[RMDB]
RNA sequence: GGGAACGACUCGAGUAGAGUCGAAAACAUAGCGUUUCACAAUGUGCGCCAUUAACAUUGUUUAUGCAAGCACAUUUCGCAAUGUACGGCGCAGAAACAUUGCCAACACAAAUACGCUUCACGAUGUAAAACAUCGGUGCGUUCGCGCACCGAUGAACGCUCUAGAUAUGUUCGCAUAUCUAGAGCGAAAAGAAACAACAACAACAAC
Reactivity to 2A3 in 0.01 (KOAc 150mM, MgCl2 10mM, bicine 150mM(pH8.5), 24C), signal-to-noise 3, nucleotides 027 to 156: c040a030u130a010g010c010g020u060u170u160c180a050c000a000a010u020g000u010g030c010g020c000c000a090u120u190a050a020c000a010u010u040g030u010u100u050a040u040g030c120a150a070g050c080a030c020a150u110u130u110c090g000c010a000a010u000g000u020a030c090g000g000c000g000c020a010g030a000a100a000c000a000u000u000g050c010c050a120a010c070a060c010a130a130a030u120a050c010g000c000u100u080c130a120c120g100a060u130g030u190a060a040a090a060c010a000u000c010g000g010u000g000c000g010u020u050c160g030c000g000c080a000c020c000g000a000u000g000a010a000
Reactivity to DMS in 0.01 (KOAc 150mM, MgCl2 10mM, bicine 150mM(pH8.5), 24C), signal-to-noise 1, nucleotides 027 to 156: c050a210u000a060g020c050g050u010u000u000c070a110c020a100a080u000g020u000g010c000g070c040c020a080u000u000a100a110c000a050u000u020g010u020u000u000a020u010g000c050a120a150g040c110a140c000a070u000u010u000c250g020c040a040a020u000g020u010a050c050g000g000c020g040c020a090g020a100a160a150c000a030u000u010g020c020c050a080a120c050a080c070a060a090a120u000a050c030g020c000u000u000c060a050c030g000a080u000g020u020a040a020a090a230c000a010u000c000g020g050u020g010c000g020u000u010c300g080c000g000c000a040c000c030g000a020u010g000a030a080

An RNA of 207 nucleotides, treated with 2A3 and DMS and read out base by base. Conditions: 150 mM KOAc, 10 mM MgCl2 and 150 mM bicine (pH 8.5), 24 C. The data come from the RNA Mapping Database (RMDB), library M2RFPK. For DMS, 2,000 sequencing reads were counted. For 2A3 the reverse transcriptase was SuperScript II with manganese.